[RMDB]
RNA sequence: GGGAACGACUCGAGUAGAGUCGAAAAUGUAGAAUUGCUUAGGGUUCAGAACCGAUCGCAUCUGAACUAUUUUCAGUUCGUUUCGCAUCUCGUCGGUGAUCUCUGUGGCGGGCAGAUUAAACCAUCCACGUAUACGAGGAUUCGUCCUCGUAUACGUAAAAGAAACAACAACAACAAC
Reactivity to DMS in 0.01 (KOAc 150mM, MgCl2 10mM, bicine 150mM(pH8.5), 24C), signal-to-noise 4, nucleotides 027 to 126: u000g020u000a110g000a040a040u020u000g010c070u000u000a070g000g000g020u000u000c040a030g010a040a050c110c040g000a030u020c110g000c050a090u000c020u020g000a010a030c030u010a070u020u020u010u010c050a020g010u000u000c010g000u000u010u030c080g010c080a050u010c040u020c070g010u010c050g000g000u000g010a050u020c060u010c050u020g020u030g010g000c100g000g010g000c010a050g000a050u020u020a050a060a110c090c040a060u020c070c120
Reactivity to 2A3 in 0.01 (KOAc 150mM, MgCl2 10mM, bicine 150mM(pH8.5), 24C), signal-to-noise 9, nucleotides 027 to 126: u160g040u060a050g040a080a060u080u050g030c060u100u110a120g050g030g010u020u010c020a010g020a090a060c050c050g080a120u080c060g010c070a020u000c010u010g010a010a000c020u040a160u120u100u050u070c020a020g010u000u020c030g020u060u070u090c070g010c030a070u030c030u010c040g110u020c060g030g030u040g050a070u020c010u000c000u030g030u030g040g020c030g010g030g000c020a010g000a070u110u170a060a040a020c020c020a020u080c030c020